[RMDB]
An RNA of 207 nucleotides, treated with 2A3 and read out base by base. Values cover nucleotides 27 to 156. For 2A3, 512 sequencing reads were counted.
RNA sequence: GGGAACGACUCGAGUAGAGUCGAAAAGACGCCUUUAGAAGAAGAGGCUAGCGGGUAUUCCGGUGUGGGAUACUUAGUAAUAUGCAACGCUAAUUGCAUAAGAUUGUAGGACGGAAUUUACAGUCUUUAGAGAUAAGCACGUUCGCGUGCUUAUCAACCUCCUCAUCCAGUUCGCUGGAUGAGGAGGAAAAGAAACAACAACAACAAC
Reactivity to 2A3 in 0.01 (KOAc 150mM, MgCl2 10mM, bicine 150mM(pH8.5), 24C), signal-to-noise 1, nucleotides 027 to 156: g040a030c050g020c000c010u020u040u020a300g080a300a000g040a090a000g000a070g010g000c000u010a040g020c030g020g000g050u000a010u030u010c010c000g100g140u300g000u080g040g020g000a000u000a000c040u000u040a030g010u030a040a120u080a040u190g000c030a090a000c040g000c120u130a120a000u100u000g000c000a000u000a050a100g000a040u000u010g080u070a040g000g010a040c140g000g070a090a070u070u090u000a090c030a010g020u000c000u060u090u120a100g040a000g000a080u000a000a000g060c000a000c010g010u020u040c130g010c030g080u020g010c000u000u000a000u000c000a000a000